Annotation:
The record gives the reactivity of an RNA of 177 nucleotides to 2A3 and DMS.
[RMDB]
RNA sequence: GGGAACGACUCGAGUAGAGUCGAAAAGAAGCCAGGGCAGAUCCGUGCACAGCACCUUGCCGUAGAAGAACAGCAAGGCCGCCAAUGCCUGACGAUGCGUGGAGACCGAAACCUUGCGCUCGUUCGCACGUUGUUGAUCGUUCGCGAUCAACAACGUAAAAGAAACAACAACAACAAC
Reactivity to 2A3 in 0.01 (KOAc 150mM, MgCl2 10mM, bicine 150mM(pH8.5), 24C), signal-to-noise 1, nucleotides 027 to 126: g090a040a000g080c000c010a000g010g020g100c040a010g010a150u000c040c040g020u080g000c010a020c000a080g000c010a020c020c000u000u020g000c000c020g010u040a030g100a300a010g130a110a030c000a000g020c010a000a000g000g000c030c050g010c010c030a020a060u080g000c000c010u080g030a010c030g010a020u170g000c000g010u040g110g000a040g010a000c050c100g100a120a040a050c010c030u030u080g000c020g020c010u000c010g030u080u030c050g000c050
Reactivity to DMS in 0.01 (KOAc 150mM, MgCl2 10mM, bicine 150mM(pH8.5), 24C), signal-to-noise 2, nucleotides 027 to 126: g020a060a150g000c020c040a050g010g000g010c010a070g000a130u010c090c070g000u000g000c010a070c130a200g000c010a180c020c010u000u000g020c000c020g020u010a070g010a090a090g000a070a080c020a030g020c010a050a050g020g030c070c080g000c030c050a140a130u010g000c000c010u000g000a030c060g000a080u020g000c010g000u010g000g040a030g050a120c080c040g010a130a070a070c150c010u020u010g000c050g000c020u010c010g000u000u000c110g010c100
The reactions ran in a buffer of 150 mM KOAc, 10 mM MgCl2 and 150 mM bicine (pH 8.5), at 24 C. Source: RMDB library OK2TRN, as collected in RNAgym. Values cover nucleotides 27 to 126.